Structure probing data (DMS and 2A3) for a 177-nucleotide construct. 2A3 adducts were read by reverse transcription with SuperScript II with manganese.
RNA sequence: GGGAACGACUCGAGUAGAGUCGAAAACGUAAUAUGUUCGCAUAUUACGAAAUCUCCAAUCAAGGCUAACCAGGAUCCUCCGAUGAAUUAAAGCCCUCGGUAAAAGGAGCGGGUUCGCCCGCUCCAAGAUGCAUCAUUACUUCGGUAAUGAUGCAUCAAAAGAAACAACAACAACAAC
Reactivity to DMS in 0.01 (KOAc 150mM, MgCl2 10mM, bicine 150mM(pH8.5), 24C), signal-to-noise 2, nucleotides 027 to 126: c000g020u000a010a000u000a000u010g020u010u010c150g020c000a010u000a000u000u010a010c010g030a020a070a130u010c060u000c000c140a080a080u000c080a070a080g000g020c010u000a040a140c070c070a070g000g020a100u000c040c020u000c010c010g020a070u010g000a060a080u000u010a080a120a120g000c060c010c000u000c120g000g000u000a080a070a070a150g000g000a010g050c000g010g000g000u000u010c250g030c000c000c000g020c000u000c000c000a030a030
Reactivity to 2A3 in 0.01 (KOAc 150mM, MgCl2 10mM, bicine 150mM(pH8.5), 24C), signal-to-noise 2, nucleotides 027 to 126: c010g000u010a010a000u000a000u030g020u020u040c080g010c100a010u000a000u010u000a010c010g000a050a010a000u020c020u000c030c020a050a090u110c060a080a050g030g000c010u050a040a040c050c010a050g080g000a080u040c010c000u020c040c000g100a070u080g050a090a200u200u130a220a020a030g020c010c010c000u050c090g080g050u110a080a090a070a120g000g000a010g010c000g020g010g020u020u050c110g050c000c020c020g000c000u010c000c000a000a000